[RMDB]
RNA sequence: GGGAACGACUCGAGUAGAGUCGAAAAUCGCCACCGUGGUCGAGCGGGCGGCGCCCCGAAUCGAGAACGGCGGUGUGGCGCUCGAACGCGGCGCCGGGGUGUUCGGGGCGCAGGUGGACCGCCUGGACAUUUACUGCACCUUCGGGUGCAGUAAAUGAAAAGAAACAACAACAACAAC
Reactivity to DMS in 0.01 (KOAc 150mM, MgCl2 10mM, bicine 150mM(pH8.5), 24C), signal-to-noise 2, nucleotides 027 to 126: u020c060g000c010c000a080c070c060g010u010g020g020u010c030g020a130g020c040g000g000g000c020g010g000c010g020c020c010c010c000g020a040a010u000c060g020a130g000a140a150c030g000g020c020g010g000u000g010u000g000g000c060g010c080u000c140g010a110a100c040g010c010g020g010c010g020c000c000g000g000g000g020u000g020u000u000c010g020g000g000g020c010g010c010a010g000g030u010g000g010a070c040c020g020c070c020u000g000g010a300
Reactivity to 2A3 in 0.01 (KOAc 150mM, MgCl2 10mM, bicine 150mM(pH8.5), 24C), signal-to-noise 2, nucleotides 027 to 126: u020c030g060c010c000a040c020c060g050u120g050g130u130c090g050a090g100c060g000g050g010c050g050g000c020g000c010c000c000c000g010a020a020u140c300g030a020g030a280a060c010g040g000c020g110g300u060g030u030g110g000c040g000c080u040c100g150a180a060c020g030c080g080g000c000g000c000c050g020g000g020g010u100g010u010u000c000g000g000g000g010c000g000c010a000g000g000u100g010g030a080c000c000g000c020c010u020g000g040a030
Conditions: 150 mM KOAc, 10 mM MgCl2 and 150 mM bicine (pH 8.5), 24 C. The record gives the reactivity of an RNA of 177 nucleotides to DMS and 2A3. For DMS the reverse transcriptase was MarathonRT. For 2A3 the reverse transcriptase was SuperScript II with manganese. As a SHAPE reagent, 2A3 marks flexible, mostly unpaired nucleotides at the ribose 2'-OH. The 2A3 profile rests on 1,660 reads. DMS (dimethyl sulfate) methylates the pairing face of unpaired adenines and cytosines.